An RNA of 177 nucleotides, treated with DMS and read out base by base. Values cover nucleotides 27 to 126. The RNA was probed in 150 mM KOAc, 10 mM MgCl2 and 150 mM bicine (pH 8.5) at 24 C.
[RMDB]
RNA sequence: GGGAACGACUCGAGUAGAGUCGAAAAUUGUUCUAGUGACCCAGUGUGUACAUAAGGUUGCUUCCUUUCAACCUAAUUCAUCAUAGAUUAGCUUUUGGAAAGAUUGGGUUUUCAAAUGCGUAAAGUGCUUCGCAGAAGAUUUCGAUCUUCUGCGAAGAAAAGAAACAACAACAACAAC
Reactivity to DMS in 0.01 (KOAc 150mM, MgCl2 10mM, bicine 150mM(pH8.5), 24C), signal-to-noise 1, nucleotides 027 to 126: u010u030g000u020u010c030u000a160g040u000g000a150c010c000c000a130g030u010g000u010g000u000a080c120a070u030a120a100g010g020u000u000g030c180u010u000c060c080u010u010u010c030a060a030c160c000u020a040a130u000u010c060a090u020c090a040u010a100g000a060u000u000a110g010c050u000u010u020u020g000g000a040a020a040g010a190u000u000g000g020g000u000u000u000u000c010a000a030a050u010g000c000g020u000a110a100a130g000u000g000